[RMDB]
RNA sequence: GGGAACGACUCGAGUAGAGUCGAAAACAUGGCUUCGAAGCGAUGUCGAUGCGGCAAAUCACAUCGCGUGCAGCGGUGAAUCUUGCCGCGGUCAACUAUCAUUUCGGCAGCAAGGAAGCGCUCAUCAGAGCUGCCCUAUAUUCGUAUAGGGCAGCUCAAAAGAAACAACAACAACAAC
Reactivity to 2A3 in 0.01 (KOAc 150mM, MgCl2 10mM, bicine 150mM(pH8.5), 24C), signal-to-noise 1, nucleotides 027 to 126: c030a070u110g120g000c000u060u000c000g020a020a020g000c010g070a060u060g030u050c050g000a010u070g010c000g000g000c010a000a020a000u040c070a110c000a080u030c040g000c000g020u080g000c180a080g000c010g020g040u020g000a040a040u010c060u000u000g010c000c020g020c030g000g040u060c000a050a080c030u130a050u220c020a040u020u050u010c000g000g020c010a010g000c010a060a040g110g030a020a080g010c060g000c040u020c050a240u130c080a000
Reactivity to DMS in 0.01 (KOAc 150mM, MgCl2 10mM, bicine 150mM(pH8.5), 24C), signal-to-noise 1, nucleotides 027 to 126: c080a080u010g010g010c000u000u010c000g010a000a000g020c060g000a030u000g010u000c060g040a030u000g000c020g000g000c010a000a000a020u010c200a100c010a030u000c000g020c010g030u010g020c260a110g030c010g010g050u000g010a120a060u000c230u000u000g030c000c000g000c000g010g010u000c040a030a000c000u000a030u000c000a010u000u000u000c000g010g000c120a020g000c030a050a120g000g040a060a150g000c080g000c060u000c070a110u010c150a130